[RMDB]
RNA sequence: GGGAACGACUCGAGUAGAGUCGAAAAGGUCAAUAUCAAAGAGCCCCACCGAUCGGCGGGUCAGUUUGUGUUCCUCUAUGGCUCCGGUAGGAUAUUGAAUCGGCAUAUCAAAGCCGGCAAAGGGCGCACCGUAUCAUUUAUUCGUAAAUGAUACGGUAAAAGAAACAACAACAACAAC
Reactivity to DMS in 0.01 (KOAc 150mM, MgCl2 10mM, bicine 150mM(pH8.5), 24C), signal-to-noise 6, nucleotides 027 to 126: g010g010u000c030a030a020u010a040u010c040a060a110a110g010a200g000c050c010c030c060a080c040c020g000a060u020c080g010g020c220g010g000g000u020c040a040g010u020u000u020g010u020g000u000u010c010c010u000c090u010a080u010g010g000c030u000c000c000g000g000u000a040g010g000a020u000a030u010u000g010a050a120u020c010g000g000c020a080u020a170u030c260a060a120a140g010c000c000g000g000c250a030a060a090g000g000g000c040g010c130
The record gives the reactivity of an RNA of 177 nucleotides to DMS. Reactivities are given for positions 27 through 126. DMS adducts were read by reverse transcription with MarathonRT.